An RNA of 177 nucleotides, treated with 2A3 and DMS and read out base by base. The RNA was probed in 150 mM KOAc, 10 mM MgCl2 and 150 mM bicine (pH 8.5) at 24 C. The 2A3 profile rests on 3,404 reads. DMS adducts were read by reverse transcription with MarathonRT.

RNA sequence: GGGAACGACUCGAGUAGAGUCGAAAACCUCGGCUGGUUCGCGACGCAGCCCCCCGGCCGUGGAUGCUGCACUCGGGCUCGGGAUCCGCCCAGGUAGCCGGCCUCGGACCCAGGUCCUGCGCCCAGGAGGUUUACCCUAUUUCGAUAGGGUAAACCUAAAAGAAACAACAACAACAAC
Reactivity to 2A3 in 0.01 (KOAc 150mM, MgCl2 10mM, bicine 150mM(pH8.5), 24C), signal-to-noise 3, nucleotides 027 to 126: c000c000u020c030g020g000c020u040g030g040u080u080c050g040c040g070a070c050g010c050a040g030c000c000c010c010c000c010g030g020c010c020g010u050g020g010a080u160g010c040u030g020c020a040c080u080c060g000g030g020c050u030c040g020g000g010a030u040c040c020g020c000c000c000a000g010g030u030a000g030c010c030g050g010c020c010u010c020g080g010a140c010c030c010a030g000g050u010c000c000u010g000c000g000c010c010c010a030g020g080
Reactivity to DMS in 0.01 (KOAc 150mM, MgCl2 10mM, bicine 150mM(pH8.5), 24C), signal-to-noise 2, nucleotides 027 to 126: c000c010u010c040g000g000c010u000g030g000u000u000c090g030c070g010a050c140g030c070a090g000c000c010c020c060c040c030g000g010c010c010g020u020g000g010a110u050g000c060u000g050c010a080c070u030c170g000g010g000c020u000c010g010g010g010a030u000c020c150g000c020c000c020a040g000g000u000a100g030c030c210g000g020c010c030u000c100g000g000a110c000c060c090a170g000g000u000c000c000u000g010c060g030c060c000c000a100g010g000